Structure probing data (2A3 and DMS) for a 177-nucleotide construct. Conditions: 150 mM KOAc, 10 mM MgCl2 and 150 mM bicine (pH 8.5), 24 C. For 2A3, 1,258 sequencing reads were counted. The data come from the RNA Mapping Database (RMDB), libraries RFM100 and RFMREP.
RNA sequence: GGGAACGACUCGAGUAGAGUCGAAAAGCAGGAAGCGAACGAACGUCGGAACAGGGAAACUCAAGUCAAUCUGGGGCCCGUGAAAAGGCGAGUACGGUGUUCGUACCGAGAUCCGACACAGGUGCUCUUAGUCCGUAUACUUCGGUAUACGGACUAAAAAAGAAACAACAACAACAAC
Reactivity to 2A3 in 0.01 (KOAc 150mM, MgCl2 10mM, bicine 150mM(pH8.5), 24C), signal-to-noise 3, nucleotides 027 to 126: g060c070a060g100g040a170a000g020c070g020a030a030c030g000a080a030c030g020u000c000g050g010a010a040c050a150g020g030g000a050a080a040c020u050c040a110a050g060u080c040a080a210u080c100u060g000g010g060g060c000c020c020g030u030g060a080a090a000a040g150g000c010g010a000g000u020a000c000g000g130u170g060u160u270c020g000u000a020c020c000g020a000g000a050u020c000c000g040a010c000a000c030a050g090g000u090g020c000u020c000
Reactivity to DMS in 0.01 (KOAc 150mM, MgCl2 10mM, bicine 150mM(pH8.5), 24C), signal-to-noise 3, nucleotides 027 to 126: g000c100a070g000g030a090a120g010c020g010a090a120c090g000a040a140c110g060u010c040g020g000a040a150c100a220g000g020g000a090a110a050c070u000c080a040a020g000u030c190a040a180u060c090u000g020g000g000g050c050c030c030g000u030g010a020a090a090a070g020g000c070g040a140g000u010a020c010g000g000u060g000u010u040c050g020u010a060c070c020g000a090g000a040u010c040c020g000a090c040a010c080a020g020g000u010g000c020u000c070